RNA sequence: GGGAACGACUCGAGUAGAGUCGAAAAACGCGGAGUACGCUCCGCGACAACACUUCUUUCGACCCGCUAACCGAGACCUAUGGGUCGUUAAAUUACGUCUCUAUCUUACUCACAUAACAUCGCACCAAAAACGUGGUUCGGUUCGCCGAACCACGAAGAUCGUUUUGAACUUCGGUUCAAAACGAUCAAAAGAAACAACAACAACAAC
Reactivity to 2A3 in 0.01 (KOAc 150mM, MgCl2 10mM, bicine 150mM(pH8.5), 24C), signal-to-noise 2, nucleotides 027 to 156: a000c010g000c000g000g000a000g020u020a010c110g040c060u000c000c000g040c000g020a000c000a030a070c040a030c060u110u080c010u030u300u270c000g040a010c020c010c010g000c140u150a030a020c040c000g020a000g020a040c010c000u060a120u230g010g000g000u010c010g010u000u010a000a020a020u140u030a000c010g000u000c010u000c000u010a080u070c040u050u120a090c040u020c040a130c060a160u170a120a030c030a150u110c050g020c080a070c030c000a080a060a080a070a020c040g000u000g000g000u000u000c000g000g000u000u050c140g000c050c000g000a000a000c000c000a000c010g000a000a000
Record summary:
This 207-nucleotide RNA was probed chemically with 2A3. Conditions: 150 mM KOAc, 10 mM MgCl2 and 150 mM bicine (pH 8.5), 24 C. The 2A3 profile rests on 1,106 reads. For 2A3 the reverse transcriptase was SuperScript II with manganese.